[RMDB]
RNA sequence: GGGAACGACUCGAGUAGAGUCGAAAACUGAGCUCUCGGCGCCAUGGUGGCAGUAUGAGCUAUGGCGGCAGUGGAGAGCAGGCAGCCGACCUGCCCGGACUCCAGCCGCAACGCAAUGCCGUAAGGAGCUUUGUACUUUGUUCGCAAAGUACAAAGCAAAAGAAACAACAACAACAAC
Reactivity to DMS in 0.01 (KOAc 150mM, MgCl2 10mM, bicine 150mM(pH8.5), 24C), signal-to-noise 3, nucleotides 027 to 126: c040u000g000a090g030c030u000c010u010c050g000g020c020g010c040c030a090u030g020g030u000g000g020c070a120g020u040a070u020g030a300g030c010u000a060u020g020g010c000g020g020c000a180g000u010g000g010a010g000a070g000c070a060g000g000c000a040g000c200c240g050a110c160c020u000g000c000c060c030g000g000a110c010u000c050c020a130g000c000c020g000c030a050a030c110g000c070a170a100u020g000c020c000g000u040a110a100g000g000a080
Reactivity to 2A3 in 0.01 (KOAc 150mM, MgCl2 10mM, bicine 150mM(pH8.5), 24C), signal-to-noise 6, nucleotides 027 to 126: c020u020g020a000g020c000u000c010u010c040g040g010c020g000c000c000a070u120g120g010u080g110g000c030a030g060u150a140u220g120a040g030c010u030a050u090g070g000c000g030g000c030a070g110u070g090g010a000g000a010g000c000a000g010g010c000a010g030c050c090g060a090c010c000u010g000c000c020c010g100g060a030c000u000c000c000a020g010c010c020g000c030a050a020c040g020c020a040a100u110g000c010c000g050u080a040a100g060g020a040
An RNA of 177 nucleotides, treated with DMS and 2A3 and read out base by base. 2A3 adducts were read by reverse transcription with SuperScript II with manganese. High DMS reactivity at an A or C suggests that its Watson-Crick edge is free. The reactions ran in a buffer of 150 mM KOAc, 10 mM MgCl2 and 150 mM bicine (pH 8.5), at 24 C. For DMS the reverse transcriptase was MarathonRT. The data come from the RNA Mapping Database (RMDB), libraries RFM100 and RFMREP.